[RMDB]
RNA sequence: GGGAACGACUCGAGUAGAGUCGAAAAAACAUAGCUUGAUACCUACUGAGCAGAAGCAUUAUAGAAAAGAUUCUAUCAGGACAGCUGAUAGUCCCAGCACUUUGGGAGGCUGAGGCCAGAGGAUCGCCACGAUCCAACUCUUCGGAGUUGGAUCGUGAAAAGAAACAACAACAACAAC
Reactivity to DMS in 0.01 (KOAc 150mM, MgCl2 10mM, bicine 150mM(pH8.5), 24C), signal-to-noise 1, nucleotides 027 to 126: a060a090c110a080u030a180g000c030u000u010g010a030u040a110c000c040u000a140c000u010g000a100g010c030a070g010a300a000g030c030a070u000u000a190u000a180g000a070a090a120a210g030a080u030u010c010u000a040u000c000a050g000g000a190c300a180g040c000u000g000a070u000a000g000u000c010c040c010a080g110c260a080c260u000u000u000g000g010g010a090g040g000c070u000g050a270g000g040c050c000a000g000a150g000g000a070u000c000g050c110
Reactivity to 2A3 in 0.01 (KOAc 150mM, MgCl2 10mM, bicine 150mM(pH8.5), 24C), signal-to-noise 1, nucleotides 027 to 126: a000a000c060a090u150a000g020c080u010u300g050a040u270a300c050c000u140a290c000u000g010a000g010c000a050g060a120a020g030c030a050u080u070a190u170a170g270a110a170a020a080g130a040u150u000c010u010a010u010c030a010g000g300a300c060a090g210c120u010g000a000u000a000g030u000c000c030c010a000g100c150a210c290u250u300u140g000g000g030a010g020g000c010u030g000a030g000g000c010c000a000g000a000g010g030a010u030c010g020c010